Description
An RNA of 177 nucleotides, treated with 2A3 and DMS and read out base by base. The reactions ran in a buffer of 150 mM KOAc, 10 mM MgCl2 and 150 mM bicine (pH 8.5), at 24 C. DMS adducts were read by reverse transcription with MarathonRT. It was measured as part of the RMDB library M2PK50.
[RMDB]
RNA sequence: GGGAACGACUCGAGUAGAGUCGAAAAGACACUCAGUUCGCUGAGUGUCAAAUAAAAUCAGCGGUUAAAAACGAGGCGUUAUAACCGCUGAUCGCCUCGUUAAAAGAACCAAGUUCGCUUGGUUCAAGUACUAUGUGAACUUCGGUUCACAUAGUACAAAAGAAACAACAACAACAAC
Reactivity to 2A3 in 0.01 (KOAc 150mM, MgCl2 10mM, bicine 150mM(pH8.5), 24C), signal-to-noise 6, nucleotides 027 to 126: g000a000c000a000c000u000c000a010g020u050u070c140g040c140u010g010a000g000u000g000u010c000a000a000a000u020a000a010a010a010u010c000a010g010c010g000g010u030u020a060a090a030a020a030c060g050a120g300g100c110g020u020u020a040u010a060a000c000c000g000c000u000g000a000u000c010g010c000c000u100c060g070u070u220a080a060a050a100g000a000a010c010c000a000a000g000u020u080c170g050c110u000u000g010g000u010u000c000a000a010
Reactivity to DMS in 0.01 (KOAc 150mM, MgCl2 10mM, bicine 150mM(pH8.5), 24C), signal-to-noise 4, nucleotides 027 to 126: g000a000c000a000c000u000c000a010g020u000u020c240g030c000u000g000a010g000u000g000u010c000a010a060a050u000a050a070a120a030u000c000a000g000c010g010g020u000u000a000a050a050a050a030c010g020a150g010g020c070g010u000u000a240u000a020a010c000c000g020c010u000g000a000u000c060g000c050c010u000c220g010u010u010a050a050a090a170g000a000a010c000c000a010a010g010u000u010c200g010c000u000u010g000g010u000u000c000a020a090